[RMDB]
RNA sequence: GGGAACGACUCGAGUAGAGUCGAAAAACGAUGUCUUUCGAGACAUCGUAAAAAACCUUUGUGCUGUAACGCAAUGACGGUGUAAGGAGCCCAUUGGGCUCCACACUAAGACAGCGUGCAGCACUCUGGUAAAAACGAAGUAGUUCGCUACUUCGAAUCACCGGUCAUGUUUCGACAUGACCGGUGAAAAAGAAACAACAACAACAAC
Reactivity to 2A3 in 0.01 (KOAc 150mM, MgCl2 10mM, bicine 150mM(pH8.5), 24C), signal-to-noise 1, nucleotides 027 to 156: a000c000g000a000u000g010u010c000u090u240u090c300g010a050g010a000c000a000u000c010g000u000a050a050a010a000a000a030c000c000u030u040u020g000u000g000c010u050g000u170a300a160c030g000c160a180a250u080g010a030c000g000g000u030g010u030a200a100g080g000a000g010c000c000c070a260u300u300g000g000g000c000u000c000c000a100c000a000c000u050a070a020g040a000c030a080g160c010g000u000g000c000a000g030c000a000c000u000c000u010g010g000u010a030a010a000a030a000c030g000a000a000g000u000a000g000u010u050c300g010c130u000a000c000u020u000c010g000a030a100